[RMDB]
RNA sequence: GGGAACGACUCGAGUAGAGUCGAAAAACUAACCGCAGAGCUGAGGCCAGUGCAGGCUCCUCUGCCUCCUACCGCCCAGGGCAAGCUUAGGAGGUGUCCUAAACCUGCCUAAAUUGCCAGGGCAACUGUGAGGCAAUGCACAGAAGCUCACUCGGCACUACGCGUAUCCUUUCGAGGAUACGCGUAGAAAAGAAACAACAACAACAAC
Reactivity to 2A3 in 0.01 (KOAc 150mM, MgCl2 10mM, bicine 150mM(pH8.5), 24C), signal-to-noise 2, nucleotides 027 to 156: a010c050u060a040a000c030c040g020c060a040g000a030g050c210u030g020a010g230g300c020c020a020g000u010g000c000a010g060g060c040u040c040c060u070c000u010g000c000c020u000c000c000u040a090c030c020g000c000c000c010a110g010g010g010c000a000a000g040c120u000u000a010g010g010a000g000g020u010g050u120c030c030u250a250a160a060c040c010u280g080c080c000u020a020a020a020u030u000g010c010c040a020g000g000g020c000a000a000c020u060g100u120g030a000g000g040c040a020a080u030g000c000a000c000a060g050a040a020g000c000u020c020a000c000u000c010g040g010c020a000
An RNA of 207 nucleotides, treated with 2A3 and read out base by base.